[RMDB]
RNA sequence: GGGAACGACUCGAGUAGAGUCGAAAACGUCACUGACUGUGUUAUAAAACUUUGUGCAUCUGAUUACAAAUUGCAGCAAGGUCCGUGCAGAUGUGAUUCAAAUCGCAGUGACGCACGCUGCAAGCAAAGCUAGUGGGCGUUUCGACGCCCACUAGCUAAAAGAAACAACAACAACAAC
Reactivity to 2A3 in 0.01 (KOAc 150mM, MgCl2 10mM, bicine 150mM(pH8.5), 24C), signal-to-noise 1, nucleotides 027 to 126: c000g000u000c000a000c000u000g000a100c000u080g250u040g050u260u000a140u000a140a150a000a000c160u060u000u050g080u090g020c000a000u000c000u050g030a250u080u200a020c050a220a300a300u100u030g080c020a050g000c000a090a170g260g000u100c120c000g000u060g130c000a000g000a050u000g000u000g030a120u160u140c040a080a190a000u160c000g000c000a000g000u000g010a000c000g040c000a080c300g000c000u000g000c000a000a030g000c050a070a070

Chemical mapping of a 177-nucleotide RNA with 2A3. Conditions: 150 mM KOAc, 10 mM MgCl2 and 150 mM bicine (pH 8.5), 24 C. Reactivities are given for positions 27 through 126.